[RMDB]
RNA sequence: GGGAACGACUCGAGUAGAGUCGAAAAGUACGAUCCGUUUUCUUUGAGUCGCGUUGUUUGGGAAUGCAGCGCAAAGUAGGUGGUAAAUUCCAUCUAAAGCUAAAUAUUGGUGCGAGACCGAUAGCGAAUUUAGUCAAUGGUUCGCCAUUGACUAAAUAAAAGAAACAACAACAACAAC
Reactivity to DMS in 0.01 (KOAc 150mM, MgCl2 10mM, bicine 150mM(pH8.5), 24C), signal-to-noise 8, nucleotides 027 to 126: g010u030a090c130g010a060u020c040c040g010u010u010u010u000c020u000u020u010g000a080g010u010c070g010c040g020u010u010g010u000u010u010g020g010g010a110a100u020g010c040a050g010c020g010c060a050a050a120g020u000a020g010g020u000g000g000u000a070a100a170u020u010c000c000a020u010c010u010a030a060a100g010c060u000a050a050a120u020a080u010u000g000g010u000g010c150g000a160g010a110c010c010g010a030u000a030g010c060g010a080
Reactivity to 2A3 in 0.01 (KOAc 150mM, MgCl2 10mM, bicine 150mM(pH8.5), 24C), signal-to-noise 9, nucleotides 027 to 126: g080u080a040c090g020a120u060c050c040g030u030u030u020u040c050u050u060u140g120a090g070u160c050g020c010g020u010u040g030u020u090u110g110g030g020a060a030u060g000c000a010g000c000g000c000a000a020a010g100u050a010g000g000u010g030g000u040a110a170a150u180u030c000c000a000u000c000u020a060a060a020g010c010u040a060a100a100u180a140u070u100g030g000u020g030c050g020a040g080a030c010c000g030a020u030a020g040c050g050a040